Source: RMDB library OK3TST, as collected in RNAgym. Chemical mapping of a 207-nucleotide RNA with 2A3. For 2A3 the reverse transcriptase was SuperScript II with manganese. The reactions ran in a buffer of 150 mM KOAc, 10 mM MgCl2 and 150 mM bicine (pH 8.5), at 24 C. Values cover nucleotides 27 to 156.

RNA sequence: GGGAACGACUCGAGUAGAGUCGAAAAGAUUAUGUGGGAGAUGCGCCCCGUCGUGUCACUGGAAACAGAAUUGCGAGUCGCUCGCGCUAGCGAUAUUGAUGUGUACAGUAGCGUACACUGUGCUACUUUAAGGUAUCAUGACGAUACCACGUCAAAAACUAUGGAGGCGAUUCGUCGCCUCCAUAGUAAAAGAAACAACAACAACAAC
Reactivity to 2A3 in 0.01 (KOAc 150mM, MgCl2 10mM, bicine 150mM(pH8.5), 24C), signal-to-noise 1, nucleotides 027 to 156: g050a030u190u210a070u180g020u070g010g050g030a040g050a030u040g000c000g160c030c010c000c000g080u090c000g000u020g050u050c020a030c090u060g110g120a040a030a000c040a030g070a120a120u060u220g010c010g030a010g030u050c000g000c030u050c010g050c020g020c080u040a030g030c000g000a000u000a080u130u040g050a010u040g070u010g000u050a030c010a050g040u040a000g020c000g050u100a070c110a080c200u140g050u110g010c000u000a080c020u040u040u080a050a030g020g000u000a000u000c000a000u180g230a090c140g000a000u000a020c000c000a020c020g000u000c000a030a030a030a030